[RMDB]
RNA sequence: GGGAACGACUCGAGUAGAGUCGAAAAGAUAUGGAAAUGGCCACGAGAUGUUCGGAAACGAAUACAUCGAUGAGUGGCAUUUCCUAAGUCAAAGUCUCCCAAGAGGGUUCGCCCUCUUGGGAGACAACGAUAUUAAGAGCUUCGGCUCUUAAUAUCGAAAAGAAACAACAACAACAAC
Reactivity to 2A3 in 0.01 (KOAc 150mM, MgCl2 10mM, bicine 150mM(pH8.5), 24C), signal-to-noise 3, nucleotides 027 to 126: g000a010u080a010u160g010g060a060a000a000u080g300g110c010c000a020c010g100a120g000a040u020g020u010u010c000g030g050a080a040a050c020g000a040a060u280a180c000a020u000c030g190a300u270g140a040g030u020g000g000c010a000u000u000u000c000c000u010a050a010g010u000c020a000a090a160g000u030c000u000c020c000c010a020a000g000a000g080g050g000u140u220c260g100c030c010c010u000c000u010u000g000g000g010a010g010a000c010a000a000
Reactivity to DMS in 0.01 (KOAc 150mM, MgCl2 10mM, bicine 150mM(pH8.5), 24C), signal-to-noise 2, nucleotides 027 to 126: g000a060u020a300u000g010g000a000a010a000u010g010g040c000c020a010c000g010a180g000a010u000g010u000u000c020g000g000a100a110a190c010g020a020a100u000a080c050a020u000c010g010a160u010g010a240g010u010g000g010c000a010u000u000u000c000c000u010a030a110g020u010c030a080a150a150g010u000c000u000c000c010c000a010a010g010a020g000g000g010u000u010c220g000c000c000c010u000c000u000u000g000g000g000a000g000a000c010a000a040

An RNA of 177 nucleotides, treated with 2A3 and DMS and read out base by base.
Values are in units of 0.01, from 0 to 300, in steps of 10.
2A3 adducts were read by reverse transcription with SuperScript II with manganese.
DMS adducts were read by reverse transcription with MarathonRT.
Conditions: 150 mM KOAc, 10 mM MgCl2 and 150 mM bicine (pH 8.5), 24 C.